The record gives the reactivity of an RNA of 177 nucleotides to 2A3 and DMS. The reactions ran in a buffer of 150 mM KOAc, 10 mM MgCl2 and 150 mM bicine (pH 8.5), at 24 C.
RNA sequence: GGGAACGACUCGAGUAGAGUCGAAAAGUCUUCUGCUUCGGCAGAAGACAAAAUAAAAAGGCGGGCGCAUCACCGCUAUGAUGCGAAGUACAAAACUACAAAAAAGCUUCGAGUUCGCUCGAAGCAAUCUAUGAUAACACUUCGGUGUUAUCAUAGAAAAAGAAACAACAACAACAAC
Reactivity to 2A3 in 0.01 (KOAc 150mM, MgCl2 10mM, bicine 150mM(pH8.5), 24C), signal-to-noise 2, nucleotides 027 to 126: g000u020c010u020u000c000u000g000c010u010u100c200g130g000c000a000g010a020a000g000a000c000a000a000a000a000u010a020a040a000a000a000g140g030c020g020g000g090c020g000c000a000u010c010a000c030c010g000c160u040a130u050g000a000u010g030c010g030a040a010g040u030a030c070a040a160a200a060c050u090a060c130a010a140a000a030a030a010g000c000u000u000c000g000a000g030u000u080c210g030c050u000c010g000a000a000g000c000a010a000
Reactivity to DMS in 0.01 (KOAc 150mM, MgCl2 10mM, bicine 150mM(pH8.5), 24C), signal-to-noise 2, nucleotides 027 to 126: g000u000c000u010u000c000u000g010c000u000u000c240g010g010c000a010g000a020a000g010a000c010a000a050a040a060u000a090a070a090a120a110g010g000c020g010g010g010c020g010c040a000u010c010a070c080c050g010c090u010a040u000g010a020u000g020c020g010a160a140g000u010a020c200a110a060a100a070c200u010a070c190a000a070a080a080a080a140g000c000u020u000c000g020a000g000u000u000c280g020c000u000c000g000a010a020g000c010a040a000